[RMDB]
RNA sequence: GGGAACGACUCGAGUAGAGUCGAAAAGAAUCUAUCAUGAAACAUCGUUUGGUCGAUUCAAUGGGGGUAUCGUUCAAAGGUAGCACGUAGUUUUGUAACAAAACUAUAUUGUUUUGCAAAAUGUCGAAAUUUGCGGGCAAAGUAUUUUGAUCCAACAUGUGUUCAAUACGUUCGCGUAUUGAACACAAAAAGAAACAACAACAACAAC
Reactivity to DMS in 0.01 (KOAc 150mM, MgCl2 10mM, bicine 150mM(pH8.5), 24C), signal-to-noise 1, nucleotides 027 to 156: g010a180a050u000c010u000a090u000c000a090u020g000a250a080a190c070a070u020c160g040u000u000u000g010g010u010c000g010a100u000u000c040a060a110u010g020g010g010g020g040u010a000u010c040g020u000u000c060a070a080a070g040g060u010a100g050c010a050c020g000u030a060g010u000u000u010u000g000u000a100a080c050a010a010a020a080c010u010a120u000a120u020u010g000u000u000u050u000g020c000a050a070a060a200u000g050u000c060g030a030a040a170u000u000u000g030c050g030g000g000c020a000a000a110g030u000a150u010u000u000u000g050a140u020c020c020a020a080c070a140
Reactivity to 2A3 in 0.01 (KOAc 150mM, MgCl2 10mM, bicine 150mM(pH8.5), 24C), signal-to-noise 1, nucleotides 027 to 156: g020a020a010u030c030u110a000u050c070a030u070g090a080a090a030c020a130u090c100g090u030u020u030g030g020u000c010g040a020u080u020c100a160a140u150g000g000g000g000g000u050a090u010c030g020u080u030c050a160a000a000g070g000u010a020g030c000a000c050g000u020a000g000u070u000u000u060g060u070a100a000c020a030a000a000a000c010u000a050u000a030u260u020g010u060u030u040u080g020c010a030a030a030a030u090g150u180c010g000a030a020a120u050u080u090g000c000g000g000g000c020a080a030a000g080u030a160u000u060u070u030g070a000u010c030c010a030a050c020a040